[RMDB]
RNA sequence: GGGAACGACUCGAGUAGAGUCGAAAACUUUGUGUUGGGGGCGACAUCUGCAGUGACAACAGGGUGGGACCUCCCAACAGCGCCACACUCGUCUCUUGUGUUCAGUAAUGGACCCAAGCAAUUGCAGGCCUCACAGCCUCAUGUACACCAUCCUGGAGCUGACCUUAGUAUUCGUACUAAGGUCAGCAAAAGAAACAACAACAACAAC
Reactivity to 2A3 in 0.01 (KOAc 150mM, MgCl2 10mM, bicine 150mM(pH8.5), 24C), signal-to-noise 1, nucleotides 027 to 156: c050u110u070u280g140u010g000u030u000g030g010g040g030g010c040g020a070c000a040u050c000u060g040c070a110g040u020g100a100c070a140a050c040a090g000g050g000u000g020g060g090a070c030c000u060c060c020c000a000a000c020a010g010c040g070c030c010a090c000a000c060u030c060g140u010c080u000c020u090u000g000u000g020u030u010c030a030g030u160a080a150u070g000g000a000c000c080c000a000a030g060c020a040a060u120u030g070c060a000g010g000c030c000u090c010a050c000a030g030c000c000u000c010a010u130g060u100a020c070a030c000c000a050u070c000c000u000g060g000a050